[RMDB]
RNA sequence: GGGAACGACUCGAGUAGAGUCGAAAAAGGCACCAUUCUAUACCAUUUUACAUACAGAGUGGCUGAGAGUUUCUCCUCAGAGCUCUGUUUGUGAACGCAGAGCUUACUGGAGAAGCGUUGUAAGAACUGCGUUCAUAGUUCUGUGAAUGCGGUGCCAAAAUUUAGUACCGUUCGCGGUACUAAAUUUAAAAGAAACAACAACAACAAC
Reactivity to 2A3 in 0.01 (KOAc 150mM, MgCl2 10mM, bicine 150mM(pH8.5), 24C), signal-to-noise 2, nucleotides 027 to 156: a000g010g050c010a000c010c010a040u170u000c050u130a280u080a240c040c040a030u100u110u080u180a040c000a030u090a030c010a010g020a000g030u010g180g220c010u030g020a010g000a010g040u080u100u180c090u140c030c000u000c010a000g000a000g020c010u010c020u010g000u030u060u090g010u020g010a010a010c010g010c010a020g030a050g000c010u020u010a010c030u090g130g090a210g080a180a050g120c060g160u210u100g020u010a010a010g010a090a040c020u020g010c010g030u010u010c000a000u010a000g030u050u070c040u070g040u040g010a010a000u010g070c060g030g020u010g020c000c000a010
Reactivity to DMS in 0.01 (KOAc 150mM, MgCl2 10mM, bicine 150mM(pH8.5), 24C), signal-to-noise 1, nucleotides 027 to 156: a130g020g000c010a030c000c010a090u000u070c090u000a190u010a130c060c050a120u000u000u010u000a150c020a120u000a070c000a000g000a010g060u000g010g000c000u010g010a040g040a130g010u010u010u000c060u000c060c000u000c030a060g030a300g000c000u000c030u050g010u010u000u000g020u010g000a030a050c050g010c000a030g000a090g000c010u000u000a080c030u000g020g010a260g000a120a100g010c080g000u000u000g030u000a040a050g000a050a070c000u010g020c010g020u000u000c000a030u000a030g030u000u000c090u000g000u000g000a030a050u000g020c010g000g060u000g030c000c010a020